[RMDB]
RNA sequence: GGGAACGACUCGAGUAGAGUCGAAAAGCUUGAGCAGGGUUUGCUUUAUAUGCCUCAGGAGUUAACUACAUCGGACAGUGUUCUCACCUUUGAGUUAACGGACAUUGUACACUGUCGUAUGGCGGCGCCAAUCAUCUCACUUCGGUGAGAUGAUUGGAAAAGAAACAACAACAACAAC
Reactivity to DMS in 0.01 (KOAc 150mM, MgCl2 10mM, bicine 150mM(pH8.5), 24C), signal-to-noise 4, nucleotides 027 to 126: g000c070u000u000g000a040g010c050a060g020g020g020u000u000u010g020c030u000u000u000a110u010a090u010g010c070c030u000c080a090g010g020a140g000u000u000a030a040c030u000a090c040a030u000c070g030g000a080c080a040g020u000g000u000u000c050u010c100a130c070c030u000u000u010g010a090g010u000u000a050a040c150g000g010a090c130a100u000u000g000u010a090c060a070c050u000g020u010c040g020u000a050u010g000g010c100g000g020c110g010
Reactivity to 2A3 in 0.01 (KOAc 150mM, MgCl2 10mM, bicine 150mM(pH8.5), 24C), signal-to-noise 3, nucleotides 027 to 126: g010c030u080u100g020a020g020c010a040g020g080g070u080u090u070g010c010u030u030u030a160u030a020u100g040c000c020u060c030a060g050g020a090g080u040u030a040a010c040u120a060c060a060u030c050g020g020a020c020a050g020u010g060u090u060c060u000c030a110c030c030u050u110u190g140a150g040u050u090a040a040c040g000g020a010c010a070u050u150g030u050a010c030a000c050u030g020u050c000g000u070a090u090g070g010c060g000g000c020g010
An RNA of 177 nucleotides, treated with DMS and 2A3 and read out base by base. The reactions ran in a buffer of 150 mM KOAc, 10 mM MgCl2 and 150 mM bicine (pH 8.5), at 24 C. For DMS, 4,520 sequencing reads were counted. Values cover nucleotides 27 to 126.